[RMDB]
This 177-nucleotide RNA was probed chemically with DMS and 2A3. Conditions: 150 mM KOAc, 10 mM MgCl2 and 150 mM bicine (pH 8.5), 24 C.
RNA sequence: GGGAACGACUCGAGUAGAGUCGAAAAGUUAAAGAUGGUGCUAAAGUUGUCAUUCCAAAUGAUGUAUCAAACCAAGCACGUGCACUUAAACUAUUAGAAGCAGCUGGUUUAAUAAAACUGAAAAAAGGACUAAUAUCGAGUUCGCUCGAUAUUAGUCAAAAGAAACAACAACAACAAC
Reactivity to DMS in 0.01 (KOAc 150mM, MgCl2 10mM, bicine 150mM(pH8.5), 24C), signal-to-noise 3, nucleotides 027 to 126: g020u040u030a110a060a050g000a200u000g000g000u000g020c100u030a030a080a100g020u000u000g000u020c030a090u010u000c110c060a040a120a050u010g020a060u010g030u030a020u010c110a040a030a030c000c040a040a060g030c020a010c110g000u000g040c030a110c040u000u020a040a090a060c180u040a080u030u020a090g030a110a150g000c000a010g030c020u000g000g000u000u000u000a020a040u020a050a040a030a030c040u030g000a010a050a040a150a100a080g010
Reactivity to 2A3 in 0.01 (KOAc 150mM, MgCl2 10mM, bicine 150mM(pH8.5), 24C), signal-to-noise 3, nucleotides 027 to 126: g040u060u040a110a050a030g090a070u090g030g000u000g080c080u150a100a070a080g050u140u010g040u060c010a020u100u060c150c000a070a110a040u060g000a000u050g020u140a070u140c040a000a000a000c010c000a050a050g030c030a020c050g070u120g010c020a000c060u050u070a070a090a040c110u170a110u300u120a090g060a150a000g070c010a000g000c000u030g040g000u090u050u000a030a020u090a070a070a050a050c080u070g130a070a070a060a060a060a060g020
2A3 adducts were read by reverse transcription with SuperScript II with manganese.